[RMDB]
Annotation
Chemical mapping of a 177-nucleotide RNA with 2A3 and DMS. Conditions: 150 mM KOAc, 10 mM MgCl2 and 150 mM bicine (pH 8.5), 24 C. Reactivities are given for positions 27 through 126.
RNA sequence: GGGAACGACUCGAGUAGAGUCGAAAAGGUCAGACUGAUCGGCAAUCCCCAUGUCAGCCAAGGAAAUAUCGACAGCAUCCAUACGGCUGACCAGACGUAGGCCGGGAUAGAUGACCGUCUGCGCCCAGUGGCCAUUUACUUUCGAGUAAAUGGCCACAAAAGAAACAACAACAACAAC
Reactivity to 2A3 in 0.01 (KOAc 150mM, MgCl2 10mM, bicine 150mM(pH8.5), 24C), signal-to-noise 1, nucleotides 027 to 126: g010g000u080c000a010g040a300c020u030g030a270u040c000g000g000c010a020a140u050c010c000c000c050a070u180g020u020c000a000g020c000c000a030a100g070g040a050a110a060u210a100u130c140g070a100c070a090g020c010a050u000c000c000a000u050a120c120g000g000c000u010g000a000c010c000a030g030a030c080g080u100a080g010g120c000c030g020g010g010a020u100a070g070a030u050g000a000c000c040g020u030c050u040g040c000g010c010c000c000a010
Reactivity to DMS in 0.01 (KOAc 150mM, MgCl2 10mM, bicine 150mM(pH8.5), 24C), signal-to-noise 2, nucleotides 027 to 126: g010g040u000c010a070g050a100c090u000g020a170u020c020g000g040c130a110a170u000c020c010c010c160a150u000g000u000c000a050g000c000c000a170a170g000g020a020a160a110u020a130u010c090g030a050c040a050g040c140a150u010c000c020a140u000a170c240g000g000c010u020g010a000c050c050a060g010a070c170g020u010a090g000g020c060c020g050g000g000a060u000a030g000a300u040g030a070c020c020g010u000c080u010g000c090g010c010c000c010a130